[RMDB]
RNA sequence: GGGAACGACUCGAGUAGAGUCGAAAAUCUGCGACAGGGCCGAAGCGUGAAACAAAAUGCAUCUCGGCAAUGCUCUGCGCUUCUACAUACCAGCAGCCGAGGACAGACGCAGGUUACAAGCGCAGCAAAAUAUAAUAAAAUUCGUUUUAUUAUAUUUAAAAGAAACAACAACAACAAC
Reactivity to 2A3 in 0.01 (KOAc 150mM, MgCl2 10mM, bicine 150mM(pH8.5), 24C), signal-to-noise 3, nucleotides 027 to 126: u010c000u040g020c000g020a030c030a110g050g030g040c030c020g030a090a030g000c030g010u040g090a180a090a020c100a030a120a050a010u130g010c020a070u020c020u000c020g000g000c040a030a030u030g000c020u020c040u110g030c030g010c040u060u030c010u080a120c030a110u200a040c020c050a010g040c010a030g080c020c000g020a000g010g060a020c010a030g000a030c010g000c020a010g000g010u030u060a070c050a050a040g010c010g000c030a030g010c010a030
Reactivity to DMS in 0.01 (KOAc 150mM, MgCl2 10mM, bicine 150mM(pH8.5), 24C), signal-to-noise 4, nucleotides 027 to 126: u020c020u010g010c010g010a160c050a120g000g010g010c050c060g000a070a050g010c020g020u010g010a130a140a140c240a040a050a090a090u010g020c050a120u020c020u000c010g030g010c010a070a040u010g000c050u010c030u010g010c040g000c030u010u030c120u010a120c170a100u040a130c050c060a080g020c060a090g000c010c000g020a030g010g010a100c150a050g030a060c020g010c010a050g000g000u010u000a070c080a060a080g010c030g000c020a030g010c110a060
Source information
Structure probing data (2A3 and DMS) for a 177-nucleotide construct. Values are in units of 0.01, from 0 to 300, in steps of 10. It was measured as part of the RMDB library OK1LIB. The RNA was probed in 150 mM KOAc, 10 mM MgCl2 and 150 mM bicine (pH 8.5) at 24 C. For 2A3, 2,531 sequencing reads were counted. 2A3 adducts were read by reverse transcription with SuperScript II with manganese. The DMS profile rests on 5,567 reads.